[RMDB]
RNA sequence: GGGAACGACUCGAGUAGAGUCGAAAAGCUUAACCUCUGUCUUUAGAUUUACAGUCUAAUGCUUACUCAGCCAUUUUACCUAUGUUCGUAAAUCGUUGACUAUACUCAACAAACCACAAAGACAUCGGCACCCUGUACCUACUAUUUGGUGCCUGAGCCACAUGAAUCCGUUCGCGGAUUCAUGUGGAAAAGAAACAACAACAACAAC
Reactivity to 2A3 in 0.01 (KOAc 150mM, MgCl2 10mM, bicine 150mM(pH8.5), 24C), signal-to-noise 1, nucleotides 027 to 156: g010c000u210u110a080a070c030c000u070c100u100g040u030c010u000u050u060a060g030a050u000u110u160a110c030a060g040u000c020u160a060a050u140g000c000u030u080a100c030u050c170a000g050c000c030a060u030u040u080u110a060c010c010u080a060u230g050u030u100c010g040u010a020a030a160u070c030g000u010u010g000a000c030u030a080u080a300c050u000c010a060a030c000a050a110a090c010c020a060c070a060a000a020g010a090c000a110u030c080g000g000c000a010c000c000c000u000g010u060a050c050c000u020a100c010u020a090u150u050u090g000g000u010g040c000c000u050g000a030g020